[RMDB]
RNA sequence: GGGAACGACUCGAGUAGAGUCGAAAACCGAUUAUUCCUUUGAUGUUCCCCAGCCAGGGAUUUUCAUCCUCGAGCUUCUUAAUUUUCUUCUUGGCCUUCCGGAGCUCCCUCUCGAGUUCCUCCGCCCUCACCAUUCUCUUCGGAGAAUGGAAAAGAAACAACAACAACAAC
Reactivity to 2A3 in 0.01 (KOAc 150mM, MgCl2 10mM, bicine 150mM(pH8.5), 24C), signal-to-noise 9, nucleotides 027 to 129: c020c000g000a060u130u080a060u140u130c020c020u130u120u260g150a100u210g020u010u010c000c010c000c000a020g000c010c020a030g050g000g020a030u080u050u050u160c060a030u020c000c030u040c040g030a040g010c020u080u030c020u090u260a240a240u100u090u080u030c030u060u010c000u050u050g050g010c010c000u030u020c040c010g020g010a020g030c020u030c010c010c000u060c000u010c020g030a020g020u020u010c000c000u000c010c000g040c000c000c000u020c000a050
Reactivity to DMS in 0.01 (KOAc 150mM, MgCl2 10mM, bicine 150mM(pH8.5), 24C), signal-to-noise 5, nucleotides 027 to 129: c050c050g010a110u010u010a000u010u010c010c020u030u050u040g060a140u080g040u010u000c000c020c010c060a110g030c050c080a110g050g000g000a060u000u000u050u090c080a050u020c000c040u000c000g000a180g000c090u000u090c100u100u000a110a090u040u000u010u000c060u030u000c050u000u000g000g000c050c020u000u010c050c030g000g000a090g040c070u020c000c020c050u030c020u030c070g030a090g000u010u000c040c030u020c020c040g030c030c000c020u030c050a150
The record gives the reactivity of an RNA of 170 nucleotides to 2A3 and DMS.
The DMS profile rests on 21,446 reads.
Reactivities are rounded to 0.1 and cut off at 0 and 3.
The 2A3 profile rests on 23,127 reads.